[RMDB]
RNA sequence: GGGAACGACUCGAGUAGAGUCGAAAAAUAUGUGGGAAAUAAUCCUUAUCCACAGGAUGUACUCUGAUUUUAGGGAAGGUAAAGGUUAUGACAAAUAUGUGGUUUUUCUGAUUUGCCAGACAUACUAUGCUAAAUUUUAAAGCUUUAACGAAGCUUAAAAUUAGUACGUGUUCGCACGUACUAAUUUAAAAGAAACAACAACAACAAC
Reactivity to DMS in 0.01 (KOAc 150mM, MgCl2 10mM, bicine 150mM(pH8.5), 24C), signal-to-noise 4, nucleotides 027 to 156: a080u000a070u000g010u000g000g010g000a090a140a090u010a090a100u010c010c010u000u000a130u000c030c080a090c050a080g010g010a110u000g020u000a080c040u000c040u000g000a120u000u000u010u000a080g020g010g030a090a130g010g010u000a030a100a080g020g020u000u000a070u010g010a090c050a050a040a070u000a050u010g010u000g030g010u000u000u000u000u010c050u000g010a100u000u010u000g030c010c020a110g020a060c040a110u000a080c050u000a080u000g000c020u010a060a070a190u010u010u010u000a020a070a060g010c010u000u000u000a070a090c170g000a070a020g010c000u010u000a030
Reactivity to 2A3 in 0.01 (KOAc 150mM, MgCl2 10mM, bicine 150mM(pH8.5), 24C), signal-to-noise 4, nucleotides 027 to 156: a000u180a070u070g030u060g000g000g070a020a100a110u170a040a050u120c020c020u060u070a090u080c030c010a010c020a020g040g010a030u060g020u090a040c050u020c060u100g080a170u080u070u070u220a060g050g000g040a070a020g030g020u060a030a070a050g030g000u090u060a070u150g040a010c040a020a100a010u100a120u160g040u080g000g060u010u020u000u040u060c020u010g060a110u010u040u100g030c020c000a000g030a030c000a020u150a040c030u060a050u120g020c010u060a080a060a100u080u140u030u060a040a080a000g000c000u020u040u070a040a000c050g050a020a000g000c000u010u060a020

An RNA of 207 nucleotides, treated with DMS and 2A3 and read out base by base. 2A3 adducts were read by reverse transcription with SuperScript II with manganese. Values cover nucleotides 27 to 156. The DMS profile rests on 8,641 reads. Source: RMDB library OK3TST, as collected in RNAgym. Conditions: 150 mM KOAc, 10 mM MgCl2 and 150 mM bicine (pH 8.5), 24 C.